[RMDB]
RNA sequence: GGGAACGACUCGAGUAGAGUCGAAAACUGAAGACCAGUACGCUGUGCGGUAGUGCCAGAGUAGCGGGGGUUGGAUAUCCCUCGCGAAUAACGCAGGCAUCGACUGCGAAGGCUAAACACAACCUGAGACCGAUAGUGAACAAGUAGUGUGAACGAACCGCCGGUUAUAGUUCGCUAUAACCGGCGGAAAAGAAACAACAACAACAAC
Reactivity to 2A3 in 0.01 (KOAc 150mM, MgCl2 10mM, bicine 150mM(pH8.5), 24C), signal-to-noise 1, nucleotides 027 to 156: c000u020g020a110a000g070a040c000c050a030g040u070a070c070g000c090u070g090u070g130c000g040g070u030a020g030u010g040c020c010a000g020a000g090u010a010g000c000g000g000g020g000g010u010u060g080g020a020u120a140u280c000c000c000u010c000g020c000g010a000a000u070a010a000c030g040c090a040g000g040c020a100u090c040g100a060c010u030g000c050g020a050a020g000g060c000u030a000a030a000c030a000c000a050a120c000c000u080g000a110g010a160c020c010g040a010u070a120g030u080g110a070a010c030a010a070g020u110a030g020u060g070u070g120a030a010c060g000a130a010

Chemical mapping of a 207-nucleotide RNA with 2A3.
For 2A3, 593 sequencing reads were counted.
It was measured as part of the RMDB library PDB130.
The reactions ran in a buffer of 150 mM KOAc, 10 mM MgCl2 and 150 mM bicine (pH 8.5), at 24 C.